[RMDB]
RNA sequence: GGGAACGACUCGAGUAGAGUCGAAAAGCGUACUACCAUCUGCAUCUACCCAGCGAUAAGAUAAUUCCCAAAUAGGAAUUAUCUUUUGACGCUGGAGAUGAACUACAGAUGGUAUCGCAAAUCCAGUCAGCGGACGUUCGCGUCCGCUGACUGGAAACAUAUUAUAAUCGUUCGCGAUUAUAAUAUGAAAAGAAACAACAACAACAAC
Reactivity to 2A3 in 0.01 (KOAc 150mM, MgCl2 10mM, bicine 150mM(pH8.5), 24C), signal-to-noise 1, nucleotides 027 to 156: g000c000g090u140a080c060u010a000c010c000a010u000c000u020g030c000a010u060c020u070a170c030c040c000a010g000c010g080a040u010a060a000g010a010u000a000a030u010u030c040c020c060a110a300a070u300a050g000g010a010a010u000u000a010u010c000u010u010u000u040g080a030c010g050c000u010g020g000a020g010a000u010g010a020a090c170u230a070c170a000g010a000u000g000g000u020a000u050c010g060c000a070a070a040u000c000c000a020g000u000c010a010g000c080g100g010a060c030g050u110u070c180g060c000g150u020c000c000g050c020u020g010a000c000u000g000g000a000a000a000